[RMDB]
An RNA of 177 nucleotides, treated with 2A3 and DMS and read out base by base. For DMS, 19,583 sequencing reads were counted.

RNA sequence: GGGAACGACUCGAGUAGAGUCGAAAAGGCCAGUGGACUUCAGGCAGGCCAGACAGCCCAAGGACAGGCGCAGAGGGGCGCCACAGCUGCAGCAGGCGGCAUGCAGGGUCCCGCAGCCCCAGAGGCAUCCAAUUAUCUAUUUCGAUAGAUAAUUGGAAAAAGAAACAACAACAACAAC
Reactivity to 2A3 in 0.01 (KOAc 150mM, MgCl2 10mM, bicine 150mM(pH8.5), 24C), signal-to-noise 5, nucleotides 027 to 126: g020g000c010c030a020g030u110g070g050a060c030u110u050c140a020g070g000c010a000g010g040c030c000a020g030a040c040a010g020c000c010c020a020a050g070g010a050c080a100g000g010c020g000c050a020g080a110g180g060g060g010c010g020c010c010a010c020a010g000c010u040g000c010a050g000c010a040g110g070c040g020g010c020a010u040g010c020a050g070g000g000u010c000c000c010g000c030a020g010c000c000c010c020a060g040a070g070g020c010a020
Reactivity to DMS in 0.01 (KOAc 150mM, MgCl2 10mM, bicine 150mM(pH8.5), 24C), signal-to-noise 9, nucleotides 027 to 126: g010g010c020c030a090g020u010g010g000a080c070u000u010c080a110g020g010c050a070g000g020c030c030a110g010a130c140a090g000c010c050c050a140a120g010g000a100c150a090g000g020c040g010c050a130g010a140g010g020g010g000c020g020c020c030a060c110a080g010c040u000g010c050a100g010c090a100g020g010c080g000g010c030a040u000g010c040a070g010g000g000u000c010c010c030g010c100a120g000c040c010c020c060a100g000a130g010g010c100a130